[RMDB]
RNA sequence: GGGAACGACUCGAGUAGAGUCGAAAACGCUCAUCGAUAACGCACUCAGCAAGAAACCACAGGUAGUGACGAUUGAGCCGACCGACAAGGCGUUCAAGACGCACGGCUGCCAACCCUGGCAGAACACCCUAUACGAGCACUUCGGUGCUCGUAUAGGAAAAGAAACAACAACAACAAC
Reactivity to 2A3 in 0.01 (KOAc 150mM, MgCl2 10mM, bicine 150mM(pH8.5), 24C), signal-to-noise 5, nucleotides 027 to 126: c050g000c000u020c010a050u040c020g100a080u100a160a040c050g020c030a040c020u030c000a050g020c080a130a110g110a220a140a060c040c030a070c060a090g020g140u190a010g010u060g040a030c010g010a030u030u190g000a000g000c000c020g060a070c020c000g010a070c070a140a050g060g020c010g010u030u090c090a050a030g110a020c000g000c010a010c000g040g000c000u000g000c010c000a040a120c100c000c030u010g000g000c010a010g000a010a030c040a050c000
Reactivity to DMS in 0.01 (KOAc 150mM, MgCl2 10mM, bicine 150mM(pH8.5), 24C), signal-to-noise 2, nucleotides 027 to 126: c280g000c000u000c000a020u000c000g040a090u000a130a170c160g000c040a080c040u020c090a080g000c150a090a060g000a120a070a080c230c030a090c180a100g000g040u010a040g000u000g010a150c000g000a070u020u000g000a000g000c020c020g000a210c000c000g030a150c110a110a140g000g000c000g000u000u000c230a100a070g000a060c000g020c020a020c040g000g000c000u000g010c000c000a030a090c170c170c090u000g010g000c020a010g010a030a070c140a100c190

Chemical mapping of a 177-nucleotide RNA with 2A3 and DMS. Conditions: 150 mM KOAc, 10 mM MgCl2 and 150 mM bicine (pH 8.5), 24 C. 2A3 adducts were read by reverse transcription with SuperScript II with manganese.